[RMDB]
RNA sequence: GGGAACGACUCGAGUAGAGUCGAAAACACAGGAGAUCAAUCAGAAUUCGUUGCGGAUCUUUUGCGCCGAUCACAUUUAUUAGAAGGUAUUCGCUGGAAUGAUAUGGCUGUAAUCGUCCGUUCCACCUAAACGGUAUGGGUUCGCCCAUACCGUUUAAAAAGAAACAACAACAACAAC
Reactivity to DMS in 0.01 (KOAc 150mM, MgCl2 10mM, bicine 150mM(pH8.5), 24C), signal-to-noise 2, nucleotides 027 to 126: c100a110c090a090g010g010a130g020a050u010c060a100a100u000c050a070g010a130a110u010u000c110g010u000u000g010c250g010g000a000u010c020u040u010u010u000g010c060g010c010c020g020a060u000c080a060c110a070u000u010u000a100u000u000a100g000a070a040g020g030u000a100u000u000c080g040c110u000g000g010a060a060u000g010a040u010a120u000g020g000c030u010g040u000a030a080u000c060g010u010c000c000g010u000u010c010c010a110c200c100
Reactivity to 2A3 in 0.01 (KOAc 150mM, MgCl2 10mM, bicine 150mM(pH8.5), 24C), signal-to-noise 2, nucleotides 027 to 126: c060a010c030a020g070g030a070g030a120u080c050a100a000u090c010a040g160a100a250u160u060c040g090u100u090g030c020g050g020a120u140c040u000u050u030u040g030c030g010c010c020g030a060u060c050a040c000a090u190u270u210a220u070u130a120g080a170a040g040g040u130a240u100u050c070g010c070u100g000g070a060a040u020g030a050u060a080u130g020g000c000u000g030u040a040a080u030c010g080u000c020c000g000u060u000c010c000a060c020c000

The record gives the reactivity of an RNA of 177 nucleotides to DMS and 2A3. DMS adducts were read by reverse transcription with MarathonRT. The DMS profile rests on 1,657 reads. Values cover nucleotides 27 to 126. Conditions: 150 mM KOAc, 10 mM MgCl2 and 150 mM bicine (pH 8.5), 24 C. Source: RMDB library OK2TST, as collected in RNAgym.